Background
Chemical mapping of a 177-nucleotide RNA with DMS. The DMS profile rests on 811 reads.

[RMDB]
RNA sequence: GGGAACGACUCGAGUAGAGUCGAAAAAAGCACUUAUCGCUAAAGAGCUGGAACAACAAGUUUGGCCGUUGUUAAAUGAUGGGAAAAUGAAACCACAGAUCUUCCAAACGUUCCCGCUGGAAGAUGCCAUUCGCAGGAUGUUCGCAUCCUGCGAAUGAAAAGAAACAACAACAACAAC
Reactivity to DMS in 0.01 (KOAc 150mM, MgCl2 10mM, bicine 150mM(pH8.5), 24C), signal-to-noise 1, nucleotides 027 to 126: a110a110g020c040a040c060u010u010a030u000c100g030c120u010a090a060a040g000a020g000c010u020g020g030a030a000c110a060a040c070a100a190g040u010u000u000g000g000c060c100g000u000u020g020u000u010a010a060a080u020g010a110u000g000g020g000a040a040a050a140u020g000a180a070a080c030c030a030c060a150g010a020u000c000u000u000c010c000a020a030a070c110g000u000u010c000c000c000g000c140u000g000g000a030a010g010a010u010g020c150